[RMDB]
RNA sequence: GGGAACGACUCGAGUAGAGUCGAAAACUUCUACAAGAACAUCACCUUUGCCUUCAUGUUCUUCUUCUACCAGAUCUUCAACGGCGUCUCCGGCCAGGCGUGGCUAGAUGGGGUGACGGCGGCGUUCUGCAUCUUGGAGAUUCGUCUCCAAGAUGCAAAAAGAAACAACAACAACAAC
Reactivity to 2A3 in 0.01 (KOAc 150mM, MgCl2 10mM, bicine 150mM(pH8.5), 24C), signal-to-noise 1, nucleotides 027 to 126: c010u030u070c020u060a110c050a070a020g040a060a000c010a030u060c020a030c050c000u080u060u060g030c000c010u050u040c070a040u120g030u030u050c000u050u010c030u090u000c040u000a120c000c030a010g040a230u020c030u140u050c040a070a050c040g040g020c030g070u050c000u020c000c030g050g000c000c010a020g070g000c080g070u030g020g000c020u030a070g030a180u130g060g000g000g020u030g040a050c030g000g040c030g140g040c000g070u100u190c040
Reactivity to DMS in 0.01 (KOAc 150mM, MgCl2 10mM, bicine 150mM(pH8.5), 24C), signal-to-noise 1, nucleotides 027 to 126: c140u000u000c010u010a070c120a110a100g020a100a050c030a020u000c070a070c050c020u010u010u000g010c040c030u000u000c110a140u000g000u000u000c040u010u000c020u000u000c030u000a040c070c060a140g000a060u000c030u000u000c100a070a110c030g040g000c050g010u000c020u010c030c060g010g030c030c040a070g000g030c060g020u000g000g030c060u000a050g010a040u000g000g000g010g020u010g010a050c070g000g010c100g020g000c040g000u000u000c070